[RMDB]
RNA sequence: GGGAACGACUCGAGUAGAGUCGAAAAAAUGGAUGAUCAAUAAGGUCCAUGGCCUAGGGAAGUAACCUCCAUUGCACUUAGGAGGGGUGCUUUCCUAAGGUCUGCCCAAGUGGCAGAGCCUACGUCACCAAUUUAGAGCAUUCGUGCUCUAAAUUGGAAAAGAAACAACAACAACAAC
Reactivity to DMS in 0.01 (KOAc 150mM, MgCl2 10mM, bicine 150mM(pH8.5), 24C), signal-to-noise 5, nucleotides 027 to 126: a080a010u000g010g000a010u000g000a110u020c200a150a120u020a100a090g010g010u000c010c010a010u000g000g000c010c020u000a020g000g010g000a020a010g010u010a160a090c010c010u000c000c000a160u030u030g020c240a080c240u010u010a130g000g010a020g000g030g000g000u010g010c010u000u000u000c000c010u000a000a010g000g010u000c000u000g010c000c000c020a130a120g010u020g020g010c020a010g000a100g010c010c010u010a040c190g000u010c130a190
Reactivity to 2A3 in 0.01 (KOAc 150mM, MgCl2 10mM, bicine 150mM(pH8.5), 24C), signal-to-noise 6, nucleotides 027 to 126: a000a000u040g010g000a000u080g030a050u180c130a080a090u220a240a080g080g000u000c000c000a010u030g010g010c010c010u010a000g000g000g000a000a000g010u010a040a080c000c010u000c000c010a050u040u240g150c150a080c180u140u160a060g030g010a030g010g030g020g050u100g000c000u000u000u010c000c000u000a020a000g030g010u000c000u000g000c000c000c010a080a080g160u290g030g000c020a020g030a050g050c010c000u030a060c030g120u080c030a020
Background:
Chemical mapping of a 177-nucleotide RNA with DMS and 2A3.